[RMDB]
RNA sequence: GGGAACGACUCGAGUAGAGUCGAAAAGAUAUGGACGAGCCUUUUGACGCUCUUAAUGUCGGAAACGACAUCCAGAGCGAUAAGGCUGUCCUAAGUCAAAAGAAGGUUAGGUUCGCCUAACCUUCAAGUCAUUGCCCUUGUUCGCAAGGGCAAUGACAAAAGAAACAACAACAACAAC
Reactivity to 2A3 in 0.01 (KOAc 150mM, MgCl2 10mM, bicine 150mM(pH8.5), 24C), signal-to-noise 1, nucleotides 027 to 126: g030a040u060a000u090g010g040a000c200g230a000g020c020c010u020u040u050u170g170a130c040g000c000u000c070u030u000a040a000u010g020u000c000g010g000a020a080a030c030g020a000c000a000u000c010c020a010g000a000g020c010g000a020u050a040a000g000g000c000u010g020u000c000c000u020a100a030g030u030c030a060a000a120a080g030a000a010g020g020u010u000a020g040g040u030u170c300g090c120c000u010a000a000c010c000u000u010c000a000a010
Reactivity to DMS in 0.01 (KOAc 150mM, MgCl2 10mM, bicine 150mM(pH8.5), 24C), signal-to-noise 2, nucleotides 027 to 126: g010a030u020a300u000g000g010a020c010g020a030g040c040c000u000u020u010u000g040a200c070g000c000u000c010u010u020a060a010u000g020u010c010g010g000a040a050a090c010g010a010c010a000u000c060c220a050g000a020g050c000g110a080u030a020a020g000g040c000u000g010u020c000c000u010a030a140g030u000c030a050a080a190a120g000a000a000g000g000u000u010a000g000g000u010u020c130g010c000c000u000a020a000c000c000u000u000c000a030a050
Conditions: 150 mM KOAc, 10 mM MgCl2 and 150 mM bicine (pH 8.5), 24 C. Structure probing data (2A3 and DMS) for a 177-nucleotide construct. For 2A3, 2,364 sequencing reads were counted. Reactivities are rounded to 0.1 and cut off at 0 and 3. For 2A3 the reverse transcriptase was SuperScript II with manganese. The data come from the RNA Mapping Database (RMDB), library TTRDEL. DMS adducts were read by reverse transcription with MarathonRT.